Structure probing data (2A3 and DMS) for a 177-nucleotide construct. The reactions ran in a buffer of 150 mM KOAc, 10 mM MgCl2 and 150 mM bicine (pH 8.5), at 24 C. For 2A3, 4,423 sequencing reads were counted. For 2A3 the reverse transcriptase was SuperScript II with manganese. Reactivities are rounded to 0.1 and cut off at 0 and 3.

RNA sequence: GGGAACGACUCGAGUAGAGUCGAAAAGCCUUGUCGUCGAUCACGAGCCAGCUCUCGGUGCCGUCGCGCUGAAUGUGCAUGCCCGGCACGGCGGGCGCGACCGAAUCGGUCGGCGGCGCGGCCUGCACAUGACGGUCCUAUUCGUAGGACCGUCAUGAAAAGAAACAACAACAACAAC
Reactivity to 2A3 in 0.01 (KOAc 150mM, MgCl2 10mM, bicine 150mM(pH8.5), 24C), signal-to-noise 3, nucleotides 027 to 126: g000c000c000u020u060g010u030c010g010u000c000g000a020u010c030a000c130g000a000g060c060c110a070g040c060u000c010u000c100g060g010u040g080c060c030g010u030c020g020c010g000c060u150g300a170a110u200g010u030g020c020a040u200g040c020c020c000g000g050c000a010c010g050g010c120g060g010g000c040g000c000g020a000c000c030g050a120a070u120c090g000g000u010c000g020g010c000g000g000c000g000c000g010g000c000c030u130g020c090a050
Reactivity to DMS in 0.01 (KOAc 150mM, MgCl2 10mM, bicine 150mM(pH8.5), 24C), signal-to-noise 5, nucleotides 027 to 126: g000c000c000u000u010g040u000c000g040u010c010g000a040u000c010a180c050g020a090g010c080c090a200g010c140u000c040u000c030g010g020u010g010c080c190g010u010c010g020c020g030c020u000g010a140a270u020g010u000g010c020a130u000g020c050c040c000g000g030c010a000c000g000g020c300g010g000g010c000g010c030g000a020c010c050g010a090a090u010c110g010g010u000c000g020g000c000g010g000c010g010c300g010g000c010c050u000g020c100a190